[RMDB]
RNA sequence: GGGAACGACUCGAGUAGAGUCGAAAACGGUUGACUUUCUAUAUAAUGCUUGACGACUAUCAAAUUUAUGUCCACAUUGUGUACAUAUCUGUACAUCAUCUUGUGCUUGUUGUCCGCACUUCGGGCACAUUUCUUACCGCUUCGGCGGUAAGAAAUGAAAAGAAACAACAACAACAAC
Reactivity to 2A3 in 0.01 (KOAc 150mM, MgCl2 10mM, bicine 150mM(pH8.5), 24C), signal-to-noise 1, nucleotides 027 to 126: c020g060g000u050u070g060a090c060u050u110u070c060u130a120u060a020u000a190a140u260g030c040u060u090g000a010c000g060a030c020u090a010u290c090a080a150a130u070u100u060a110u120g040u080c030c000a010c030a150u100u230g000u000g000u090a000c010a010u030a060u100c040u100g040u050a040c030a060u060c040a040u000c040u030u050g000u010g040c000u130u080g060u080u030g020u000c040c050g000c040a160c120u140u050c020g000g000g040c030a020
Reactivity to DMS in 0.01 (KOAc 150mM, MgCl2 10mM, bicine 150mM(pH8.5), 24C), signal-to-noise 2, nucleotides 027 to 126: c160g000g000u000u000g000a140c040u000u000u020c050u000a050u010a070u010a110a080u020g010c080u010u000g000a060c060g010a080c090u000a120u000c120a080a090a090u010u030u000a050u010g000u010c040c040a020c050a080u000u010g030u000g020u000a040c020a040u010a020u010c120u000g030u000a070c120a030u020c080a110u000c070u000u000g000u000g010c030u000u000g000u000u010g000u010c060c110g010c200a050c110u000u000c060g010g050g010c040a060